[RMDB]
An RNA of 177 nucleotides, treated with 2A3 and DMS and read out base by base. For DMS the reverse transcriptase was MarathonRT.

RNA sequence: GGGAACGACUCGAGUAGAGUCGAAAAGAAAGCUCCUCACCCGUGUGGAGGAGAAUGGCUAUAACCACCGAAACCUGAGGAAACAGGAAGCCACAACGCAAGCCAUGUGGUUAGCACACGGAAGAAACAUACGGUAUCACUUCGGUGAUACCGUAUGAAAAGAAACAACAACAACAAC
Reactivity to 2A3 in 0.01 (KOAc 150mM, MgCl2 10mM, bicine 150mM(pH8.5), 24C), signal-to-noise 8, nucleotides 027 to 126: g130a010a060a000g050c000u000c000c000u000c020a080c000c000c000g010u010g000u010g020g000a010g000g020a000g010a010a040u070g020g000c020u040a020u050a250a100c010c020a020c010c030g060a130a050a060c010c000u030g020a050g050g270a140a040a010c000a010g000g030a010a010g000c000c010a020c030a090a070c100g060c090a110a050g050c040c040a050u030g000u020g050g000u040u080a030g020c010a000c000a000c000g010g050a010a020g060a020a070a000
Reactivity to DMS in 0.01 (KOAc 150mM, MgCl2 10mM, bicine 150mM(pH8.5), 24C), signal-to-noise 6, nucleotides 027 to 126: g000a110a110a110g000c010u000c000c000u010c000a090c180c000c010g010u010g000u000g010g000a010g000g010a030g000a070a050u020g010g000c080u000a080u030a140a180c020c020a180c060c040g000a080a100a090c000c010u000g000a080g020g020a110a120a100c010a010g000g000a260a070g000c000c000a020c030a070a100c140g010c170a070a100g010c100c060a160u000g030u010g000g000u010u000a090g000c020a000c000a010c000g020g010a290a110g020a120a110a170